[RMDB]
RNA sequence: GGGAACGACUCGAGUAGAGUCGAAAAUCGCUCGGCGGGUGCCGCUAAUCCGUGACGAGACCGGGUCGGUAAUCGUCGGCCGAGCACAGUGGCUGCCGGCCGAAGAGCAGGCCCUGAUCCACGGCGAGCAUGUAUGUGCUUUCGAGCACAUACAUGCAAAAGAAACAACAACAACAAC
Reactivity to 2A3 in 0.01 (KOAc 150mM, MgCl2 10mM, bicine 150mM(pH8.5), 24C), signal-to-noise 3, nucleotides 027 to 126: u070c020g000c090u020c010g040g000c050g020g060g070u190g090c050c050g000c050u060a050a050u020c000c010g030u030g050a100c080g040a020g020a060c020c080g000g000g000u030c010g020g000u050a150a160u040c030g020u000c000g040g000c000c010g060a110g140c010a000c000a020g300u300g100g010c120u020g000c000c000g000g000c000c000g010a030a000g000a000g000c030a010g020g010c000c000c010u040g030a040u010c000c010a030c010g000g040c020g020a020
Reactivity to DMS in 0.01 (KOAc 150mM, MgCl2 10mM, bicine 150mM(pH8.5), 24C), signal-to-noise 2, nucleotides 027 to 126: u020c010g010c030u030c060g010g010c000g020g020g000u020g000c000c030g050c090u010a070a070u000c030c040g000u000g000a130c210g000a120g040a190c100c130g000g010g000u010c020g020g000u000a170a050u020c010g020u000c000g040g000c020c000g040a100g030c030a000c110a180g030u020g000g030c140u000g020c000c000g000g000c000c020g000a000a010g030a030g000c000a020g000g000c020c000c000u030g000a180u000c000c000a020c040g030g000c140g000a140